[RMDB]
RNA sequence: GGGAACGACUCGAGUAGAGUCGAAAAGUUCCACGCAGGACGCGAACAAGAAGACGCCGAAGCAACUUCAGGUCGCCGCUCACGAACUGGCGCGCGAUCUCCGCGUCGCUCGAGUAGGUUUCCCCGGGGAUCCCUCUUCGAGCCCUUGCCACCAUACGCUAAUAUAUCGCUUCGGCGAUAUAUUAGCAAAAGAAACAACAACAACAAC
Reactivity to 2A3 in 0.01 (KOAc 150mM, MgCl2 10mM, bicine 150mM(pH8.5), 24C), signal-to-noise 1, nucleotides 027 to 156: g020u020u000c030c030a080c110g030c080a050g030g050a000c020g020c010g040a130a090c100a280a050g040a010a000g040a020c110g000c030c040g000a050a010g030c030a060a210c000u040u040c040a020g020g000u000c000g000c000c010g000c030u300c120a150c070g150a300a030c130u080g010g000c000g010c020g000c010g020a000u010c000u000c020c070g020c000g000u010c060g000c000u000c000g040a050g000u080a050g140g000u020u060u030c010c010c030c050g130g050g020g010a030u050c010c030c010u030c010u040u050c020g030a020g020c000c020c030u090u110g040c020c010a040c000c030a050u050a300c010